[RMDB]
RNA sequence: GGGAACGACUCGAGUAGAGUCGAAAAGAAAGAAAGAAAGCUGACCCUUCUGCUGACGGAUCUUGUGGAGCACCACAGUGCAGAAGGCGAGAGAAGCUUUAAUGCCGACCGUCUGGGCAGCCUUGAAAAAACGGAUUCUUCUUCGGAAGAAUCCGAACAAUGCAUUCAUCUUCGGAUGAAUGCAUUGAAAAGAAACAACAACAACAAC
Reactivity to 2A3 in 0.01 (KOAc 150mM, MgCl2 10mM, bicine 150mM(pH8.5), 24C), signal-to-noise 2, nucleotides 027 to 156: g080a020a020a020g060a030a130a000g060a010a080a030g010c030u070g080a180c000c010c000u030u040c030u050g030c020u040g050a050c030g060g010a110u120c070u180u040g020u030g020g050a110g160c110a110c120c010a020c040a060g030u060g060c000a000g000a040a000g000g000c020g020a050g050a010g020a050a010g000c000u080u030u010a080a040u080g010c010c000g010a020c030c000g020u030c020u030g000g000g040c010a020g040c020c010u050u110g070a110a100a000a010a010a000c010g000g000a000u000u000c000u000u000c010u010u050c120g040g000a000a000g000a000a000u000c000c000g000a000a000
Reactivity to DMS in 0.01 (KOAc 150mM, MgCl2 10mM, bicine 150mM(pH8.5), 24C), signal-to-noise 2, nucleotides 027 to 156: g010a160a090a100g000a100a120a100g030a040a090a070g020c040u020g020a160c120c000c040u000u000c000u000g010c040u010g000a170c060g000g010a140u010c030u010u010g020u020g000g040a190g030c220a050c020c030a010c020a090g000u000g020c010a010g000a030a060g020g020c050g000a110g010a110g030a160a050g010c010u010u000u000a050a040u000g040c020c020g000a090c020c000g000u000c040u010g000g010g010c040a020g020c050c090u000u000g010a010a090a060a070a110a120c010g060g010a040u000u000c020u000u000c000u010u000c300g050g020a020a020g020a010a000u010c000c000g000a010a100
An RNA of 207 nucleotides, treated with 2A3 and DMS and read out base by base.
It was measured as part of the RMDB library M2RFPK.
For DMS, 3,648 sequencing reads were counted.
Reactivities are given for positions 27 through 156.
The reactions ran in a buffer of 150 mM KOAc, 10 mM MgCl2 and 150 mM bicine (pH 8.5), at 24 C.
2A3 is a SHAPE reagent: it acylates the 2'-hydroxyl of flexible nucleotides of all four kinds.